This 177-nucleotide RNA was probed chemically with 2A3 and DMS.
RNA sequence: GGGAACGACUCGAGUAGAGUCGAAAAUCAACAGAUACAGGCUGGUAAUUAUCACUGGCAUGCUGUUAACCAAGAGAUGUGGAAGAGCAUGUUUAAUUUGCAUGAGCAUUUACUGCUGAUGGGCUCCCCAAUUGACCCGAUUCGUCGGGUCAAUUGGAAAAGAAACAACAACAACAAC
Reactivity to 2A3 in 0.01 (KOAc 150mM, MgCl2 10mM, bicine 150mM(pH8.5), 24C), signal-to-noise 1, nucleotides 027 to 126: u020c000a000a010c000a000g030a050u100a070c000a030g070g010c000u030g000g050u030a090a070u130u140a080u200c050a020c120u010g040g000c010a010u020g000c000u020g000u160u100a070a060c020c000a030a010g140a000g000a120u200g050u080g120g010a060a000g020a020g060c010a010u000g010u000u080u030a140a150u000u090u130g040c070a030u110g160a020g070c000a000u060u070u090a070c040u020g000c000u020g010a020u060g000g120g000c020u050c040c030
Reactivity to DMS in 0.01 (KOAc 150mM, MgCl2 10mM, bicine 150mM(pH8.5), 24C), signal-to-noise 1, nucleotides 027 to 126: u010c020a040a030c050a040g040a090u000a120c140a070g010g000c030u000g000g010u000a050a070u000u000a080u000c090a050c120u030g000g040c000a020u000g010c020u000g000u000u010a140a180c030c010a060a100g010a150g010a030u000g010u010g000g030a110a080g020a080g020c010a000u000g000u000u000u000a040a170u000u010u000g040c040a050u010g010a050g020c010a030u000u000u000a100c100u010g020c020u000g000a060u000g000g000g000c070u000c030c040